An RNA of 177 nucleotides, treated with 2A3 and read out base by base. Source: RMDB library OK1LIB, as collected in RNAgym. Values cover nucleotides 27 to 126. The reactions ran in a buffer of 150 mM KOAc, 10 mM MgCl2 and 150 mM bicine (pH 8.5), at 24 C.
RNA sequence: GGGAACGACUCGAGUAGAGUCGAAAACUCUGAGUAUAGGAAAUAAUGUAACAACACUCAGCUAUACUGCAAAAAAUGGAAGCCAGAACAAUGCACCACAAAACGAUAAUGUUAAAAAUAAAAAUAACAGUGCAUUACGGUUCGCCGUAAUGCACUGAAAAGAAACAACAACAACAAC
Reactivity to 2A3 in 0.01 (KOAc 150mM, MgCl2 10mM, bicine 150mM(pH8.5), 24C), signal-to-noise 1, nucleotides 027 to 126: c080u090c080u130g050a000g000u000a000u080a000g090g000a020a050a190u130a290a000u300g030u200a000a050c070a160a010c050a050c090u110c000a030g000c000u020a020u000a000c000u010g120c060a000a000a000a000a300a000u300g070g000a020a020g000c060c000a030g000a030a040c000a040a000u080g060c020a050c000c000a060c050a000a120a140a000c050g020a000u150a090a000u300g000u070u020a000a000a000a070a000u280a000a090a000a000a000u090a080a080